Chemical mapping of a 207-nucleotide RNA with DMS and 2A3. 2A3 adducts were read by reverse transcription with SuperScript II with manganese. For 2A3, 2,892 sequencing reads were counted. The RNA was probed in 150 mM KOAc, 10 mM MgCl2 and 150 mM bicine (pH 8.5) at 24 C. The DMS profile rests on 2,185 reads.

RNA sequence: GGGAACGACUCGAGUAGAGUCGAAAAUCGCAUACGCCAGGGCUGCGCCAAAGAUCAGGAUGAACAGAGCAAACCCAAUCCAGAGCGGAGACAGCACCCACCACCAUGACCAACUGAUAUAGCCAGUCAGCUUCAGCACGAUGAAAACGAUGGUCAGGGUCUAGCUUAUAUUCGUAUAAGCUAGACCAAAAGAAACAACAACAACAAC
Reactivity to DMS in 0.01 (KOAc 150mM, MgCl2 10mM, bicine 150mM(pH8.5), 24C), signal-to-noise 2, nucleotides 027 to 156: u000c080g000c030a190u000a090c080g020c040c020a100g060g040g040c030u050g000c020g040c070c000a030a140a130g000a060u020c000a150g020g030a100u000g000a110a080c090a120g000a110g000c050a100a120a100c020c030c020a070a110u010c040c050a090g000a120g040c100g000g010a250g020a100c020a070g040c070a080c010c000c030a130c150c010a070c020c000a050u020g040a160c030c020a030a150c010u060g010a040u000a060u000a050g000c110c060a280g040u010c000a010g020c010u000u000c050a050g040c030a050c020g050a090u000g020a070a050a050a110c120g020a040u000g000g010u010c000a150g050
Reactivity to 2A3 in 0.01 (KOAc 150mM, MgCl2 10mM, bicine 150mM(pH8.5), 24C), signal-to-noise 4, nucleotides 027 to 156: u040c010g000c030a040u060a180c060g010c030c010a040g020g010g010c020u060g010c020g000c010c020a090a070a010g050a100u070c070a020g070g030a080u080g020a070a030c050a100g060a020g090c050a040a030a160c030c000c000a010a030u050c020c030a030g030a010g090c040g040g010a020g010a040c020a010g020c040a040c040c010c000a020c000c010a030c010c000a070u080g020a030c000c010a020a020c040u000g030a010u090a010u060a170g060c020c000a010g040u050c010a000g000c020u040u030c010a020g010c030a020c060g060a040u090g090a020a070a050a010c050g010a040u040g020g000u050c040a030g060